RNA sequence: GGGAACGACUCGAGUAGAGUCGAAAAGAAAAUAGCUAGGACAAAAAGAAGUCAAUGAUUUCAACCAACGGAAUUUCUUUGUCCUUUGUAAAAAUCAACACAUGAUCUGUUACUGAUUGGGAUGUGAAAUAAAACUAAAAAUAACAGCACACUGAGAUAUUAUGCACCAUUUCGAUGGUGCAUAAUAAAAAGAAACAACAACAACAAC
Reactivity to 2A3 in 0.01 (KOAc 150mM, MgCl2 10mM, bicine 150mM(pH8.5), 24C), signal-to-noise 2, nucleotides 027 to 156: g010a030a060a000a050u090a020g000c060u030a000g000g020a000c020a030a080a030a030a000g030a020a010g020u000c000a050a120u100g050a030u030u150u180c100a110a070c020c010a060a010c080g000g010a090a080u040u070u030c000u070u070u020g040u000c000c000u010u010u100g040u020a060a060a000a020a100u080c050a090a030c030a000c000a090u010g060a150u020c000u010g040u140u060a050c070u050g030a080u010u050g040g010g040a050u030g030u040g130a020a040a040u230a040a150a010a020c110u170a020a020a130a030a000u180a020a000c000a020g170c050a000c000a010c160u120g040a080g040a130
Reactivity to DMS in 0.01 (KOAc 150mM, MgCl2 10mM, bicine 150mM(pH8.5), 24C), signal-to-noise 1, nucleotides 027 to 156: g000a140a060a040a080u010a070g030c070u010a080g020g000a040c040a000a000a090a110a120g010a070a030g010u000c000a080a080u010g000a110u000u030u020c070a110a200c050c060a030a150c160g070g000a140a080u000u000u000c000u000u000u010g000u000c010c000u000u020u000g040u000a000a070a070a070a050u010c000a050a110c030a060c040a090u030g000a070u000c000u000g010u000u000a060c050u010g050a110u020u000g020g000g000a050u000g010u000g000a040a030a090u020a020a050a120a130c020u010a050a040a050a000a060u010a060a040c000a030g000c070a050c060a070c070u020g020a030g020a140

The record gives the reactivity of an RNA of 207 nucleotides to 2A3 and DMS. High 2A3 reactivity points to a flexible backbone, as in loops and unpaired stretches. For DMS, 1,690 sequencing reads were counted. Conditions: 150 mM KOAc, 10 mM MgCl2 and 150 mM bicine (pH 8.5), 24 C. The data come from the RNA Mapping Database (RMDB), library OK3TST.